[RMDB]
RNA sequence: GGGAACGACUCGAGUAGAGUCGAAAAGAAAGAAAGAAAGAACUCUGUAAAGAGAGGGAUUGCCUGGACCAGGUCGGCGGGCCUGCUCCAGUUUCCUUCGCUCUGCUCAACGGGCAGACCGCCACAAAAAACGCGUGGCUGUUCGCAGCCACGCGAACUGUAGUGUCAUGUUCGCAUGACACUACAGAAAAGAAACAACAACAACAAC
Reactivity to 2A3 in 0.01 (KOAc 150mM, MgCl2 10mM, bicine 150mM(pH8.5), 24C), signal-to-noise 2, nucleotides 027 to 156: g030a020a110a010g040a020a140a000g050a040a070a010g020a030a050c040u080c100u140g050u300a140a160a040g120a010g000a010g030g010g010a070u060u110g060c010c000u000g020g000a020c020c000a000g020g000u010c060g030g030c000g000g000g010c020c000u000g000c040u000c010c000a010g020u010u030u030c010c000u090u100c040g030c040u030c010u000g030c010u000c050a160a100c060g010g010g000c000a010g020a050c020c020g010c000c000a040c040a030a190a050a050a030a020c020g000c010g010u000g000g000c040u040g040u050u050c250g030c030a010g000c000c000a010c000g010c010g000a000a000

Conditions: 150 mM KOAc, 10 mM MgCl2 and 150 mM bicine (pH 8.5), 24 C. An RNA of 207 nucleotides, treated with 2A3 and read out base by base. The 2A3 profile rests on 1,027 reads.